[RMDB]
RNA sequence: GGGAACGACUCGAGUAGAGUCGAAAAUCAUCGCCUCGUUCACCGGGUUGCGCAGCGCACGCCCAGCCAUCCAGUCGUCGUCACCCCAGGUGUAGUCACUCGACGUCACCCGCGAUGCGGUCUGCGGAUAGUACGGCACUUUCGAGUGCCGUACUAUAAAAGAAACAACAACAACAAC
Reactivity to DMS in 0.01 (KOAc 150mM, MgCl2 10mM, bicine 150mM(pH8.5), 24C), signal-to-noise 2, nucleotides 027 to 126: u000c090a140u020c090g030c040c010u010c040g010u010u000c020a090c030c030g030g010g010u000u000g000c100g010c020a070g010c070g000c070a100c060g010c030c020c070a110g010c030c050a050u010c090c030a070g000u000c050g000u000c010g000u000c070a100c040c010c030c050a060g000g000u000g010u010a120g020u010c040a060c120u000c090g030a070c140g010u000c040a090c050c010c030g030c070g000a070u010g000c030g000g010u010c040u010g000c030g000g000
Reactivity to 2A3 in 0.01 (KOAc 150mM, MgCl2 10mM, bicine 150mM(pH8.5), 24C), signal-to-noise 1, nucleotides 027 to 126: u050c010a020u040c020g020c000c020u080c020g090u050u080c040a020c140c040g080g010g000u080u120g020c030g000c040a050g040c030g000c060a050c030g000c000c010c050a040g040c040c000a060u070c000c010a020g050u060c010g000u010c010g060u050c050a180c000c000c060c000a030g050g050u050g030u060a050g020u020c010a020c100u050c060g030a000c030g000u000c010a060c040c030c000g000c010g040a050u120g080c000g020g060u050c020u070g000c000g020g010